Conditions: 150 mM KOAc, 10 mM MgCl2 and 150 mM bicine (pH 8.5), 24 C. The record gives the reactivity of an RNA of 207 nucleotides to 2A3 and DMS. For 2A3 the reverse transcriptase was SuperScript II with manganese.
[RMDB]
RNA sequence: GGGAACGACUCGAGUAGAGUCGAAAAUUCGGUCCUUUGGAGCGGACCGUUUGCUCCGUCAGGAUGUGGAGGUUUCGCGCCCUCCUGUGCGCGUAUGUACAUCGAUACGGUUAUGUCGCCUUUGUGUCGGCGUUUGACACUUACACAUACCGGAUAAACUCCAUACUAUCUUCGGAUAGUAUGGAGUAAAAGAAACAACAACAACAAC
Reactivity to 2A3 in 0.01 (KOAc 150mM, MgCl2 10mM, bicine 150mM(pH8.5), 24C), signal-to-noise 6, nucleotides 027 to 156: u060u020c020g020g000u030c020c000u120u140u240g230g050a110g050c060g020g010a010c000c010g000u030u010u030g050c040u020c010c010g060u060c050a040g000g040a030u010g030u040g020g020a020g000g020u000u050u040c020g000c000g010c010c000c000u050c000c030u070g030u070g000c040g000c000g010u040a040u130g050u030a020c050a160u060c120g090a060u060a120c030g060g010u110u050a030u030g130u160c030g010c020c000u100u110u160g100u060g010u060c010g010g070c060g050u060u050u150g010a000c010a010c020u020u060a020c020a000c010a020u100a270c000c010g020g000a030u080a050a130
Reactivity to DMS in 0.01 (KOAc 150mM, MgCl2 10mM, bicine 150mM(pH8.5), 24C), signal-to-noise 3, nucleotides 027 to 156: u010u000c010g020g020u000c000c000u010u010u010g030g020a180g050c180g020g010a020c020c010g000u000u000u000g010c020u000c030c020g020u000c080a100g020g020a070u000g020u010g020g000a080g000g020u000u000u010c030g010c030g000c030c000c010u010c050c030u000g010u010g030c060g050c050g020u010a030u000g050u010a070c090a140u000c110g010a180u000a040c020g030g020u010u000a030u000g020u010c030g030c030c080u010u000u010g030u010g010u000c030g010g030c090g020u000u000u010g010a050c040a010c020u010u000a070c020a010c010a040u000a080c020c000g000g000a100u010a070a100